[RMDB]
Structure probing data (2A3 and DMS) for a 177-nucleotide construct. DMS adducts were read by reverse transcription with MarathonRT.
RNA sequence: GGGAACGACUCGAGUAGAGUCGAAAAGAUAUGGACCGAACUACUUGAUUAUGAGCGUUGAAAUCGGAAACGAUGGAGCUCAGAAUCAAGCGGUCCUAAGUCAAAGGUGACGGUUCGCCGUCACCAACCCUAAAGACAGGUUCGCCUGUCUUUAGGGAAAAGAAACAACAACAACAAC
Reactivity to 2A3 in 0.01 (KOAc 150mM, MgCl2 10mM, bicine 150mM(pH8.5), 24C), signal-to-noise 3, nucleotides 027 to 126: g030a010u070a020u170g000g000a000c010c010g020a060a040c070u170a040c000u300u000g010a000u010u060a020u040g000a000g040c050g270u300u040g010a050a040a010u010c010g020g040a090a040a030c020g000a000u020g000g040a010g000c000u000c000a000g020a010a000u000c010a000a010g000c010g010g000u030c000c000u010a100a020g030u020c050a120a050a130g000g010u000g000a010c000g000g060u060u060c300g010c100c000g000u010c000a000c000c000a000a010
Reactivity to DMS in 0.01 (KOAc 150mM, MgCl2 10mM, bicine 150mM(pH8.5), 24C), signal-to-noise 4, nucleotides 027 to 126: g010a050u000a300u000g010g000a010c010c000g010a060a030c070u020a300c010u010u010g000a020u000u000a070u000g000a010g010c010g010u000u020g000a070a120a030u000c010g000g000a100a060a180c010g000a030u000g000g000a080g030c000u000c000a000g000a000a010u000c000a010a000g010c000g000g010u010c010c010u000a030a070g010u000c040a080a080a100g020g010u000g010a010c010g010g000u000u010c270g020c000c010g000u000c000a000c000c010a020a020
Source information: DMS (dimethyl sulfate) methylates the pairing face of unpaired adenines and cytosines. Conditions: 150 mM KOAc, 10 mM MgCl2 and 150 mM bicine (pH 8.5), 24 C.